[RMDB]
RNA sequence: GGGAACGACUCGAGUAGAGUCGAAAAGAGCGAUUAGACAAAGGGGUAGAGCUACAUAUUAGAUAGCUGUAUAAUCGUUCCAGUUACAUCAAAACAUCUUCAAUAUUUAUUACUUACUUUCCUUUCUGCCAGAGUACGGUAUUCGUACCGUACUCAACGAAAGAUGUUAGUUCGCUAACAUCUUUCGAAAAGAAACAACAACAACAAC
Reactivity to 2A3 in 0.01 (KOAc 150mM, MgCl2 10mM, bicine 150mM(pH8.5), 24C), signal-to-noise 9, nucleotides 027 to 156: g000a000g000c000g010a010u010u040a030g030a050c060a030a090a040g060g020g030g020u060a030g030a010g040c000u020a010c020a090u220a190u200u160a080g170a290u010a010g020c010u010g030u040a030u020a010a020u010c000g000u010u000c020c000a020g030u080u130a070c040a090u150c050a080a120a080a060c020a090u070c060u200u110c080a120a110u080a210u200u210u110a160u140u100a070c030u080u040a030c000u040u090u100c020c000u030u060u040c020u030g030c030c030a040g000a000g000u000a000c000g000g000u010a020u010u070c140g020u020a000c000c000g000u000a000c000u000c000a000a000
Reactivity to DMS in 0.01 (KOAc 150mM, MgCl2 10mM, bicine 150mM(pH8.5), 24C), signal-to-noise 3, nucleotides 027 to 156: g000a040g030c000g020a070u000u000a040g020a080c060a040a080a080g010g010g000g040u000a080g010a060g010c030u000a020c040a190u000a220u010u010a150g000a160u000a030g000c030u000g000u000a050u000a020a020u000c020g020u000u000c010c040a160g010u000u010a050c060a110u000c100a090a130a070a080c020a070u010c050u000u000c060a060a130u010a090u000u010u010a070u010u000a060c070u000u000a080c040u000u000u000c000c020u000u000u000c040u000g010c060c050a160g010a040g020u000a000c000g020g020u010a020u000u000c300g010u000a020c020c010g010u000a000c000u000c000a000a060
Structure probing data (2A3 and DMS) for a 207-nucleotide construct. Reactivities are given for positions 27 through 156. Conditions: 150 mM KOAc, 10 mM MgCl2 and 150 mM bicine (pH 8.5), 24 C. For 2A3 the reverse transcriptase was SuperScript II with manganese.